[RMDB]
RNA sequence: GGGAACGACUCGAGUAGAGUCGAAAAGCCUAUUAAAGGAGGUCGUGAGCUGGGUUUAGACCGUCGUGAGACAGGUCGGCUGCUAUCUAUUGGGGGUGUUUUGGUGCUUGACAGGAACGUUCGUAUAAUUCUCGCAAAUUUUCGAAUUUGCGAGAAUAAAAGAAACAACAACAACAAC
Reactivity to 2A3 in 0.01 (KOAc 150mM, MgCl2 10mM, bicine 150mM(pH8.5), 24C), signal-to-noise 1, nucleotides 027 to 126: g000c010c000u070a130u080u230a040a080a070g050g020a020g060g030u100c030g020u040g000a050g000c020u040g000g100g050u000u020u050a010g050a020c000c020g020u010c010g000u080g040a020g000a020c130a140g030g020u020c040g030g010c000u040g000c020u030a110u090c010u010a070u190u170g000g000g000g010g020u060g140u040u000u000u100g000g000u050g000c020u060u110g040a030c050a030g010g000a090a000c080g020u000u020c020g000u050a040u020a220
Reactivity to DMS in 0.01 (KOAc 150mM, MgCl2 10mM, bicine 150mM(pH8.5), 24C), signal-to-noise 3, nucleotides 027 to 126: g010c000c000u000a140u010u030a060a100a090g020g020a050g000g010u000c050g010u010g000a080g010c060u020g000g000g020u010u030u030a090g010a010c000c000g000u000c000g000u030g000a190g020a020c020a090g030g000u010c010g000g030c050u010g000c020u010a050u010c040u010a140u000u010g000g030g000g000g010u000g000u000u020u010u010g000g020u010g020c120u000u000g000a130c080a070g000g010a090a110c110g020u010u010c040g010u030a060u010a080